[RMDB]
RNA sequence: GGGAACGACUCGAGUAGAGUCGAAAACGGGUACCGCCGUCAAGGCGGGUGGGGCCGGUGUCCCGCGCAACAAUAACUCCCAGGAGCGCUACCCCAACCUGCUCAAGGAAUGUGAGGUCCUGACCACCCGCAUGACACAUUUCGAUGUGUCAUGCGGAAAAGAAACAACAACAACAAC
Reactivity to DMS in 0.01 (KOAc 150mM, MgCl2 10mM, bicine 150mM(pH8.5), 24C), signal-to-noise 1, nucleotides 027 to 126: c100g000g010g050u010a040c070c000g000c000c060g020u000c180a130a160g010g020c030g010g050g010u000g060g000g000g000c120c120g000g040u000g000u000c010c000c010g000c050g020c080a170a060c160a090a040u010a130a110c020u000c010c000c020a100g030g010a120g000c050g020c050u000a120c000c000c020c070a070a040c060c030u000g010c030u010c040a200a060g010g010a070a050u000g020u010g020a140g000g000u000c000c000u000g000a130c040c030a050c010